[RMDB]
RNA sequence: GGGAACGACUCGAGUAGAGUCGAAAAGUAGCCCUGCCCAUUCCUGUAGAACUUGCCAGAUCAGCACUGAGACGGUUUGAGGCCUCCUGUUGUCCCUCCAGCAGAAGGUUAUAGAACUCUCGGACACCUUUUCUUCACUUUUCGAAGUGAAGAAAAGAAAAGAAACAACAACAACAAC
Reactivity to 2A3 in 0.01 (KOAc 150mM, MgCl2 10mM, bicine 150mM(pH8.5), 24C), signal-to-noise 8, nucleotides 027 to 126: g100u090a020g040c000c000c010u020g010c010c010c000a040u060u050c010c010u040g050u120a040g030a130a040c020u040u060g020c020c020a040g020a150u080c030a010g060c030a020c060u040g010a010g010a060c100g100g010u020u020u080g080a060g040g040c000c000u000c000c010u010g010u030u020g040u080c000c010c000u030c010c000a010g010c000a000g010a050a010g040g000u030u030a110u050a110g050a020a010c000u000c000u010c030g020g010a030c010a090c020
Reactivity to DMS in 0.01 (KOAc 150mM, MgCl2 10mM, bicine 150mM(pH8.5), 24C), signal-to-noise 6, nucleotides 027 to 126: g010u020a120g000c030c000c010u010g000c020c010c010a110u000u000c030c010u000g020u000a070g020a100a090c050u000u010g000c020c010a080g010a090u010c060a080g040c080a080c060u020g000a050g000a090c210g000g000u010u010u020g010a190g000g000c010c000u010c020c010u020g010u000u000g010u010c020c010c010u010c300c010a010g000c030a030g000a070a030g000g010u000u000a080u020a200g000a050a050c040u000c040u000c010g010g000a120c140a080c140